The record gives the reactivity of an RNA of 207 nucleotides to 2A3. The data come from the RNA Mapping Database (RMDB), library OK3TST. 2A3 adducts were read by reverse transcription with SuperScript II with manganese.

RNA sequence: GGGAACGACUCGAGUAGAGUCGAAAAACGGGGUCACCGAGGCCACUCGCAUCCUGGAGGAAGAGCGCCAGCGCAUCGAGCGCUACGGGCUGUCGAUGAUCGGCUACUCGCAAGGCGCGAUCGUCACCUCCGAGCUGUGGGAAUACCACAUCAAGCCCCUUUGGGUUGUUUUCGAACAACCCAAAGGAAAAGAAACAACAACAACAAC
Reactivity to 2A3 in 0.01 (KOAc 150mM, MgCl2 10mM, bicine 150mM(pH8.5), 24C), signal-to-noise 1, nucleotides 027 to 156: a010c000g000g000g010g070u110c040a070c120c120g040a100g020g000c030c020a130c030u080c070g030c020a020u010c010c040u080g000g010a000g000g010a050a040g010a000g110c030g000c000c030a010g010c000g000c000a060u200c140g150a070g040c010g010c010u020a040c070g020g000g000c030u020g000u030c030g010a070u120g040a060u070c000g020g000c030u010a020c020u040c090g100c130a140a120g040g000c100g000c100g050a110u130c030g060u000c030a020c040c010u000c000c010g020a000g000c010u010g020u020g010g030g050a020a090u060a110c000c030a020c020a030u170c120a040a080g000c000c000